[RMDB]
RNA sequence: GGGAACGACUCGAGUAGAGUCGAAAACCAGAAGCACUGACAAUUGCGCCAAUGACGAGCUUGGCAAUGUCGUCAGCAUCUUCUGCGUUGGGAAGUCCCGCGAGGCACAUCAUGAUCGGAAUUCCCUUAUCACCAACGAGGAUGUCAGUCAAGCUGCGGUUUCAGUAUGCUUCGGCAUACUGAAACCAAAAGAAACAACAACAACAAC
Reactivity to 2A3 in 0.01 (KOAc 150mM, MgCl2 10mM, bicine 150mM(pH8.5), 24C), signal-to-noise 1, nucleotides 027 to 156: c000c000a000g010a000a020g000c080a000c060u000g020a000c030a030a070u010u020g060c090g000c040c050a010a020u100g040a230c180g120a050g190c000u000u000g010g000c040a000a060u080g060u110c030g000u050c030a010g020c060a120u060c000u060u030c000u020g010c060g060u060u050g050g000g000a030a040g050u050c000c060c000g000c030g040a070g100g000c010a030c030a180u090c030a130u250g070a100u070c070g030g030a070a110u030u000c050c020c030u030u100a260u160c090a060c080c000a080a000c030g000a000g030g050a000u020g030u110c010a000g030u010c050a060a000g030c040u000g010c010

Conditions: 150 mM KOAc, 10 mM MgCl2 and 150 mM bicine (pH 8.5), 24 C. This 207-nucleotide RNA was probed chemically with 2A3. 2A3 adducts were read by reverse transcription with SuperScript II with manganese. It was measured as part of the RMDB library OK3TST. The 2A3 profile rests on 559 reads.